[RMDB]
RNA sequence: GGGAACGACUCGAGUAGAGUCGAAAAGGGGUCCUUCGGAAUCCAGAGCUCAAGGAGGCUGAAGCCUCCACGGCUACCCACCCUUGAGAACUACUCUGGUGGCCGAAGGACGGAGGCACCCAAAAGAUCUCUUUGCCGUUCGCGGCAAAGAGAUCAAUGGUACUUUUAUGUUCGCAUAAAAGUACCAAAAAGAAACAACAACAACAAC
Reactivity to 2A3 in 0.01 (KOAc 150mM, MgCl2 10mM, bicine 150mM(pH8.5), 24C), signal-to-noise 1, nucleotides 027 to 156: g020g010g010g010u000c010c030u010u000c010g000g010a010a070u080c000c000a020g000a000g000c010u020c000a010a000g030g010a040g020g000c090u180g120a110a020g000c000c060u140c210c170a050c050g010g000c000u030a080c010c030c030a090c030c010c030u000u000g020a000g020a030a190c260u290a050c000u250c000u000g130g000u030g220g100c000c000g010a010a000g000g000a000c030g000g020a010g000g000c050a070c050c000c040a020a100a000a030g020a000u000c000u000c000u000u000u000g030c020c010g020u040u040c300g020c010g140g000c000a000a000a000g000a000g000a000u000c010a000a000